This 207-nucleotide RNA was probed chemically with DMS and 2A3. For 2A3, 1,499 sequencing reads were counted. Reactivities are given for positions 27 through 156. DMS adducts were read by reverse transcription with MarathonRT. For 2A3 the reverse transcriptase was SuperScript II with manganese. It was measured as part of the RMDB library OK3TST. The reactions ran in a buffer of 150 mM KOAc, 10 mM MgCl2 and 150 mM bicine (pH 8.5), at 24 C.
[RMDB]
RNA sequence: GGGAACGACUCGAGUAGAGUCGAAAAAUGAAAGGUGUGGGGCAUAUUUUAUAUAUUGAUGCAUACGACUCGUUUACUGGUAAUAUCGUUGAUUUGAUCGAAUGCACGUUAGAUGUUGUGGUUACGAUUGUCAAGAUCGAUAGCAAGUGGCCAGCGGGAUCCCUUGGUAAUUCGUUACCAAGGGAUCAAAAGAAACAACAACAACAAC
Reactivity to DMS in 0.01 (KOAc 150mM, MgCl2 10mM, bicine 150mM(pH8.5), 24C), signal-to-noise 2, nucleotides 027 to 156: a120u010g020a070a070a080g020g030u000g010u010g020g020g010g060c040a060u000a040u000u020u060u000a110u010a120u000a110u030u000g000a100u000g000c050a110u000a110c030g000a050c050u010c090g010u000u000u000a090c040u020g000g040u000a060a090u020a070u000c070g010u000u000g000a080u000u000u000g070a080u000c030g010a120a060u000g000c000a040c040g010u000u000a090g010a140u000g030u000u000g020u000g020g010u010u000a100c010g010a090u000u000g000u000c100a060a120g020a070u000c010g020a090u000a060g020c020a050a110g000u000g020g010c040c040a060g010c050g020g010
Reactivity to 2A3 in 0.01 (KOAc 150mM, MgCl2 10mM, bicine 150mM(pH8.5), 24C), signal-to-noise 3, nucleotides 027 to 156: a000u090g030a000a030a010g000g000u020g000u040g030g030g030g010c030a040u050a080u040u110u150u020a150u040a050u010a040u110u190g030a040u050g010c020a040u070a090c050g030a030c040u020c060g010u000u030u110a040c050u030g040g040u090a080a050u050a050u150c070g020u010u030g030a090u040u000u200g030a060u080c000g020a040a010u080g030c010a000c050g000u080u090a060g000a110u070g020u100u040g020u050g020g000u030u020a030c010g020a060u000u050g040u070c030a060a020g020a030u050c000g050a020u070a030g040c000a060a030g000u040g050g040c030c000a010g070c040g010g020